[RMDB]
RNA sequence: GGGAACGACUCGAGUAGAGUCGAAAAGGGUGGCCAAUAACACAGGACAAUCAUUAACACACCACCCCGACCUCCCGGCCCACCCCCCAGAACAGCUGCCAUAUCAGGGGGUUGAACCUGGGAUCAGAAGGGUUCCCAGCUCCCCAUUCCUGGUAUAUAAUAUAUAGUCAUUCGUGACUAUAUAUUAAAAAGAAACAACAACAACAAC
Reactivity to DMS in 0.01 (KOAc 150mM, MgCl2 10mM, bicine 150mM(pH8.5), 24C), signal-to-noise 1, nucleotides 027 to 156: g010g060g030u000g020g000c030c060a100a160u000a110a160c090a240c020a150g020g030a070c050a100a120u000c100a150u020u000a020a080c030a110c120a060c000c000a030c000c010c000c040g000a140c120c040u000c000c020c000g000g000c020c020c010a150c030c010c000c000c000c030a200g040a100a090c070a050g010c020u040g020c030c060a050u000a040u010c020a100g000g020g000g000g020u000u010g020a030a070c080c020u000g030g020g020a060u000c060a130g010a170a150g000g020g010u000u010c040c010c020a020g010c020u000c000c000c010c000a280u000u010c030c020u080g000g000u020a090u000a200
Reactivity to 2A3 in 0.01 (KOAc 150mM, MgCl2 10mM, bicine 150mM(pH8.5), 24C), signal-to-noise 1, nucleotides 027 to 156: g000g020g010u010g000g000c090c080a120a110u210a190a020c080a000c050a060g130g050a090c180a220a020u110c030a130u270u250a160a030c080a000c000a010c000c000a000c000c020c000c040g030a150c000c010u020c010c000c060g050g030c060c000c000a050c030c000c090c030c030c000a000g100a010a080c070a010g110c030u080g020c060c000a020u030a020u140c010a010g000g120g000g060g000u020u220g010a000a000c010c000u000g000g000g000a010u020c010a000g230a190a040g060g030g010u020u000c010c010c000a000g020c000u020c000c060c000c000a020u090u150c000c000u010g010g010u020a060u040a000
The record gives the reactivity of an RNA of 207 nucleotides to DMS and 2A3. Values are in units of 0.01, from 0 to 300, in steps of 10. The DMS profile rests on 1,712 reads. For DMS the reverse transcriptase was MarathonRT. For 2A3, 385 sequencing reads were counted. Conditions: 150 mM KOAc, 10 mM MgCl2 and 150 mM bicine (pH 8.5), 24 C. The data come from the RNA Mapping Database (RMDB), library OK3TST.